Conditions: 150 mM KOAc, 10 mM MgCl2 and 150 mM bicine (pH 8.5), 24 C. Structure probing data (2A3) for a 177-nucleotide construct. Source: RMDB library OK1LIB, as collected in RNAgym. The 2A3 profile rests on 550 reads. Values cover nucleotides 27 to 126.

RNA sequence: GGGAACGACUCGAGUAGAGUCGAAAACUUAUAGCAAAUAUUGUCAAUAUUUGCUUUGACAUUAUUUACAUUAAGUUUUUCAAUUUGGGCCUAACAGGGGCGGCGCUUGCUACCUCAACCGGUUAUCCAGCUACCUGGUGUUCGCACCAGGUAGCUGAAAAGAAACAACAACAACAAC
Reactivity to 2A3 in 0.01 (KOAc 150mM, MgCl2 10mM, bicine 150mM(pH8.5), 24C), signal-to-noise 1, nucleotides 027 to 126: c000u010u000a030u050a050g010c010a010a010a000u000a000u020u040g030u000c000a020a020u050a190u230u150u300g050c000u000u000u000g000a000c000a000u000u030a000u000u030u010a020c020a070u020u000a010a010g020u010u000u000u000u010c110a080a080u120u090u120g050g000g010c010c010u030a070a040c060a090g000g000g080g000c010g020g010c060g050c140u060u140g010c010u010a060c010c000u010c000a090a020c150c000g050g000u040u060a080u170c040